[RMDB]
RNA sequence: GGGAACGACUCGAGUAGAGUCGAAAACCCCCUGCGGAGAGCUGCUUCUUCUUGUUCUCGAGGGCCUUCCUUCUUCGGUGAUCCUGCCUCUCCUUGUCGGUGAAUCCUCCCCUGAGGGGCCUCUUUCGUGCGCUCUGGUUCGCCAGAGCGAAAAGAAACAACAACAACAAC
Reactivity to DMS in 0.01 (KOAc 150mM, MgCl2 10mM, bicine 150mM(pH8.5), 24C), signal-to-noise 2, nucleotides 027 to 129: c030c020c040c030c030u010g040c110g000g000a050g040a070g060c090u020g020c000u060u030c040u090u020c050u010u050g030u030u010c020u000c070g030a000g030g010g020c090c050u010u020c020c010u010u050c030u040u020c000g000g000u020g020a000u020c060c010u050g010c050c010u030c030u030c020c030u010u010g040u020c090g030g110u010g020a020a010u020c030c020u010c020c030c030c040u020g010a090g020g000g020g040c040c010u020c040u000u040u020c140g000u030g000
Reactivity to 2A3 in 0.01 (KOAc 150mM, MgCl2 10mM, bicine 150mM(pH8.5), 24C), signal-to-noise 4, nucleotides 027 to 129: c000c000c000c000c000u070g130c050g020g000a030g000a020g060c050u070g030c000u070u050c020u070u030c020u060u120g060u090u030c050u010c020g030a110g010g030g020c000c020u040u040c010c000u060u050c000u070u110c010g040g040u060g040a050u070c000c030u070g040c020c010u020c000u030c020c010u000u060g080u070c040g020g010u060g040a030a060u050c010c000u000c000c020c000c000u010g040a030g020g000g010g000c000c020u050c000u000u110u040c030g040u080g060